About this RNA:
An RNA of 177 nucleotides, treated with 2A3 and DMS and read out base by base. The data come from the RNA Mapping Database (RMDB), library M2PK50.
RNA sequence: GGGAACGACUCGAGUAGAGUCGAAAAGCCAUGAGUUUCGACUCAUGGCAAAAGCGCGUCAGCGCUACGAUGCAAGCCCAAGCGCGUCCAUCGUAAAUGACAAAAUUCUCGGGUUCGCCCGAGAAAACAAUAUCACGUAGUUCGCUACGUGAUAUUGAAAAGAAACAACAACAACAAC
Reactivity to 2A3 in 0.01 (KOAc 150mM, MgCl2 10mM, bicine 150mM(pH8.5), 24C), signal-to-noise 9, nucleotides 027 to 126: g000c000c000a000u000g000a000g010u070u060u210c200g040a020c010u010c000a000u000g000g000c000a000a010a000a020g000c000g000c000g040u070c060a240g300c050g000c010u010a000c000g010a010u020g010c050a080a070g000c000c020c060a130a050g130c160g000c010g070u040c040c010a020u020c010g020u020a040a070a100u050g010a020c040a010a090a010a120u050u000c000u000c000g020g000g010u040u050c180g090c010c000c000g000a000g000a000a010a000a000
Reactivity to DMS in 0.01 (KOAc 150mM, MgCl2 10mM, bicine 150mM(pH8.5), 24C), signal-to-noise 8, nucleotides 027 to 126: g010c000c000a010u000g000a010g010u000u000u010c170g020a050c000u000c000a020u000g010g010c010a010a010a040a210g010c010g000c020g000u000c190a080g020c010g010c010u000a010c030g010a020u000g010c100a100a180g010c000c020c060a120a130g010c080g010c050g010u010c300c030a020u000c030g010u000a070a080a070u000g010a070c160a090a070a060a100u000u000c000u000c000g010g000g000u000u010c200g010c010c000c000g010a010g000a000a020a050a140